Conditions: 150 mM KOAc, 10 mM MgCl2 and 150 mM bicine (pH 8.5), 24 C. Structure probing data (2A3) for a 207-nucleotide construct. 2A3 adducts were read by reverse transcription with SuperScript II with manganese. For 2A3, 519 sequencing reads were counted. Source: RMDB library OK3TST, as collected in RNAgym.

[RMDB]
RNA sequence: GGGAACGACUCGAGUAGAGUCGAAAAUUAUGUAUUGACUAACUAUGCAACAGGCGGGGUCUGUCACGCACCACUCAUCAACAUUCAAGACUGUCAACUCCCUGAAGAGGACCUGCAGAAGCUCCAACUCGACAACUAUCAAGAGUCUUUGCAACUCGGAGCUAUUCUAUUUCGAUAGAAUAGCUCCAAAAGAAACAACAACAACAAC
Reactivity to 2A3 in 0.01 (KOAc 150mM, MgCl2 10mM, bicine 150mM(pH8.5), 24C), signal-to-noise 1, nucleotides 027 to 156: u080u070a080u170g040u020a080u110u150g040a000c000u030a070a010c070u080a070u190g000c010a070a000c000a080g000g000c010g050g030g040g060u080c030u090g080u030c030a000c050g020c020a070c080c000a040c020u130c030a120u050c070a070a050c000a050u150u140c040a140a040g080a090c030u030g030u010c000a030a110c030u020c010c000c000u030g070a060a090g010a030g010g030a020c010c010u050g000c000a040g030a070a000g000c020u010c000c000a100a120c070u030c090g050a060c020a070a050c090u040a120u150c020a100a000g090a000g120u000c000u000u050u050g050c000a040a000c060u000c030